This 177-nucleotide RNA was probed chemically with 2A3 and DMS.
The DMS profile rests on 2,156 reads.
[RMDB]
RNA sequence: GGGAACGACUCGAGUAGAGUCGAAAAAAAAUUCCAAUACAAGCCCUGUAGAAAAAAAUUUACAUUUUGUAUGGAUAGGUGGAGAAGUCAGUGAUAUUGCUCUUGAAUACAUAAAACAAUGGGCUGAACGGUGGUAUUUAUUCGUAAAUACCACCGUAAAAGAAACAACAACAACAAC
Reactivity to 2A3 in 0.01 (KOAc 150mM, MgCl2 10mM, bicine 150mM(pH8.5), 24C), signal-to-noise 1, nucleotides 027 to 126: a000a000a000a000u060u010c030c000a030a000u150a070c060a020a020g000c000c000c070u100g010u070a040g210a150a090a090a000a000a060a120u080u130u100a100c040a000u090u090u030u160g000u030a040u000g030g060a030u030a070g050g000u160g170g010a040g010a160a000g090u050c160a010g060u030g080a160u070a100u260u170g040c010u000c020u060u060g010a040a000u000a130c040a040u130a030a040a000a000c040a000a090u070g000g000g010c080u000g000a010
Reactivity to DMS in 0.01 (KOAc 150mM, MgCl2 10mM, bicine 150mM(pH8.5), 24C), signal-to-noise 2, nucleotides 027 to 126: a050a070a030a070u020u020c020c010a070a100u020a140c040a050a060g010c010c020c050u020g000u010a040g020a000a030a100a200a100a060a100u010u030u000a040c050a030u020u020u000u000g010u000a020u000g000g010a070u000a050g000g010u010g000g010a060g000a080a060g010u000c070a020g020u000g020a090u020a020u050u010g010c010u010c040u010u010g040a150a040u020a060c160a050u020a040a080a020a130c150a030a020u010g010g020g010c000u010g010a040